[RMDB]
An RNA of 170 nucleotides, treated with 2A3 and DMS and read out base by base. Conditions: 150 mM KOAc, 10 mM MgCl2 and 150 mM bicine (pH 8.5), 24 C. For 2A3 the reverse transcriptase was SuperScript II with manganese. Values cover nucleotides 27 to 129.
RNA sequence: GGGAACGACUCGAGUAGAGUCGAAAAGACACUGCAGGUGUGGGGAAUACCUUCAUCUGUGAAGAAGUCGCAAAUGACCUCACUACCGCCCUACGCAGGCCUAUUAACGCUACGGAUAGAUCACAUUAAGGGCACCGGUUCGCCGGUGCCAAAAGAAACAACAACAACAAC
Reactivity to 2A3 in 0.01 (KOAc 150mM, MgCl2 10mM, bicine 150mM(pH8.5), 24C), signal-to-noise 4, nucleotides 027 to 129: g000a000c020a010c030u030g000c000a000g030g000u000g000u000g020g000g000g000a050a120u200a240c000c000u010u020c000a000u000c000u010g050u020g070a040a000g080a010a030g010u000c010g030c050a040a090a150u180g010a030c030c000u010c020a020c030u090a090c040c030g000c010c020c030u030a010c060g040c050a000g000g060c000c000u090a100u040u080a140a060c100g000c040u060a010c040g060g000a000u030a030g030a010u060c020a030c010a160u010u130a090a060g000
Reactivity to DMS in 0.01 (KOAc 150mM, MgCl2 10mM, bicine 150mM(pH8.5), 24C), signal-to-noise 3, nucleotides 027 to 129: g020a060c020a040c030u010g020c010a020g020g020u030g000u010g000g000g000g000a210a080u050a000c020c040u010u000c000a050u020c020u000g010u000g010a150a060g000a180a080g030u010c050g050c150a040a160a000u100g030a000c040c000u070c030a090c020u060a110c100c100g020c020c020c010u050a030c100g090c000a160g010g040c180c090u140a100u080u060a070a220c200g040c050u050a010c100g050g020a060u080a050g020a030u030c050a060c060a030u050u020a000a000g070